Conditions: 150 mM KOAc, 10 mM MgCl2 and 150 mM bicine (pH 8.5), 24 C. This 207-nucleotide RNA was probed chemically with DMS and 2A3.
[RMDB]
RNA sequence: GGGAACGACUCGAGUAGAGUCGAAAACGGCAGUUCCCCAGCAGCCAUGACCUACCAGGCUGCGGUGCGGCUCGCCGCACAGGUCAUCCCUCAUCGGGCGCGUCCUGCGUCCUUCCACGCCAACCCAAGACCAUUGCUUCCUUCGGGAAGCAAUGAAGAUACGAAAGUAGUUCGCUACUUUCGUAUCAAAAGAAACAACAACAACAAC
Reactivity to DMS in 0.01 (KOAc 150mM, MgCl2 10mM, bicine 150mM(pH8.5), 24C), signal-to-noise 1, nucleotides 027 to 156: c000g020g000c030a160g000u000u000c020c010c000c040a060g040c070a050g050c010c020a130u000g000a160c100c020u000a150c150c070a170g030g040c030u000g000c030g020g030u000g000c020g000g080c000u010c210g030c000c020g000c000a060c040a030g010g010u000c040a140u000c010c010c020u000c090a130u000c100g000g000g040c000g000c020g010u000c120c010u000g000c030g000u000c020c010u020u010c030c010a090c060g000c010c010a030a090c030c010c030a070a170g000a130c090c000a020u000u000g020c010u000u000c000c000u000u000c240g050g030g010a010a000g000c000a000a000u010g000a070a070
Reactivity to 2A3 in 0.01 (KOAc 150mM, MgCl2 10mM, bicine 150mM(pH8.5), 24C), signal-to-noise 5, nucleotides 027 to 156: c040g060g000c020a030g000u040u040c010c000c000c000a040g000c000a000g010c010c010a170u130g020a040c010c020u110a180c100c080a020g000g000c000u000g000c000g000g000u010g000c000g010g000c040u090c170g120c010c000g010c010a030c010a010g040g010u020c020a100u080c020c010c010u090c030a120u120c060g010g000g000c010g010c010g050u200c010c100u160g000c010g040u010c000c010u040u030c030c010a050c050g000c010c020a060a050c020c000c030a040a010g060a040c050c000a000u000u000g000c000u010u010c000c000u020u040c080g060g000g000a000a000g000c000a000a000u000g000a000a000
For 2A3 the reverse transcriptase was SuperScript II with manganese. The data come from the RNA Mapping Database (RMDB), library M2RFPK.